Record summary: Source: RMDB library M2PK50, as collected in RNAgym. Structure probing data (2A3 and DMS) for a 177-nucleotide construct. High 2A3 reactivity points to a flexible backbone, as in loops and unpaired stretches. The reactions ran in a buffer of 150 mM KOAc, 10 mM MgCl2 and 150 mM bicine (pH 8.5), at 24 C. The 2A3 profile rests on 2,071 reads. DMS adducts were read by reverse transcription with MarathonRT.

[RMDB]
RNA sequence: GGGAACGACUCGAGUAGAGUCGAAAACCCUCACUCUUCGGAGUGAGGGAAAUCUGAUUCCCAAUAGCUGGGUAACCGGGCUAAGACGGAUAGGCGUUGCCAAAAGAUCUGGCUUCGGCCAGAUCAAGAUUCUCUUAUGGUUCGCCAUAAGAGAAUCAAAAGAAACAACAACAACAAC
Reactivity to 2A3 in 0.01 (KOAc 150mM, MgCl2 10mM, bicine 150mM(pH8.5), 24C), signal-to-noise 2, nucleotides 027 to 126: c000c000c000u000c010a010c000u000c010u040u080c220g120g000a000g000u000g000a000g010g000g000a030a060a010u020c010u030g030a100u100u080c010c000c000a000a030u070a030g040c010u020g020g030g040u120a120a090c010c090g120g020g000c030u040a020a020g030a000c010g030g000a030u070a060g020g040c070g120u100u100g110c010c000a030a100a040a140g010a010u000c000u000g000g000c000u060u020c220g090g000c000c000a000g010a000u000c000a000a000
Reactivity to DMS in 0.01 (KOAc 150mM, MgCl2 10mM, bicine 150mM(pH8.5), 24C), signal-to-noise 3, nucleotides 027 to 126: c000c000c000u000c000a010c010u000c000u000u010c200g030g010a030g000u000g000a010g000g000g000a010a020a030u000c050u010g000a230u000u000c000c000c000a100a190u000a030g030c020u000g000g010g010u010a100a120c040c020g010g000g000c020u000a030a040g010a150c190g000g000a030u000a100g010g020c040g020u000u010g000c010c020a090a060a120a130g000a020u000c000u000g000g010c000u000u010c170g020g000c000c000a010g000a000u000c010a040a060